[RMDB]
The data come from the RNA Mapping Database (RMDB), library M2PK90. The record gives the reactivity of an RNA of 177 nucleotides to 2A3 and DMS. For DMS, 2,096 sequencing reads were counted.

RNA sequence: GGGAACGACUCGAGUAGAGUCGAAAAACAAGCUGCACGUGCGUGCGAGCAGUUUUCGAAAUCGCACGUUUCACGUAAAGACGCAACUGUACUCGAGAAAGCGAGUCACGCAGACAGCGUCAAGGAACAAACGCAAGCAUUUCGAUGCUUGCGUUUGAAAAGAAACAACAACAACAAC
Reactivity to 2A3 in 0.01 (KOAc 150mM, MgCl2 10mM, bicine 150mM(pH8.5), 24C), signal-to-noise 3, nucleotides 027 to 126: a000c030a020a050g080c050u070g010c080a020c040g060u050g020c010g020u020g000c000g000a040g050c090a060g010u090u000u090u150c020g030a070a050a010u040c020g000c020a000c000g000u020u100u080c060a040c000g040u050a000a070a100g000a010c010g000c000a080a010c000u020g030u100a010c000u000c010g050a080g240a180a070a010g240c010g020a020g020u040c020a010c120g030c010a020g080a150c090a070g010c000g000u030c050a020a030g060g020a060a080
Reactivity to DMS in 0.01 (KOAc 150mM, MgCl2 10mM, bicine 150mM(pH8.5), 24C), signal-to-noise 3, nucleotides 027 to 126: a130c150a140a110g010c050u000g000c090a040c040g010u010g030c040g020u000g010c010g010a040g000c110a100g010u020u000u000u000c080g000a060a080a080u000c000g010c030a050c020g000u000u000u010c070a060c070g000u010a060a120a090g000a040c020g000c010a120a130c000u000g000u010a040c000u000c010g000a180g000a060a130a110g030c010g010a040g000u000c300a070c150g000c010a000g010a080c200a150g010c000g020u000c010a070a070g010g040a070a100
Values cover nucleotides 27 to 126. 2A3 adducts were read by reverse transcription with SuperScript II with manganese. High DMS reactivity at an A or C suggests that its Watson-Crick edge is free. Conditions: 150 mM KOAc, 10 mM MgCl2 and 150 mM bicine (pH 8.5), 24 C. For DMS the reverse transcriptase was MarathonRT.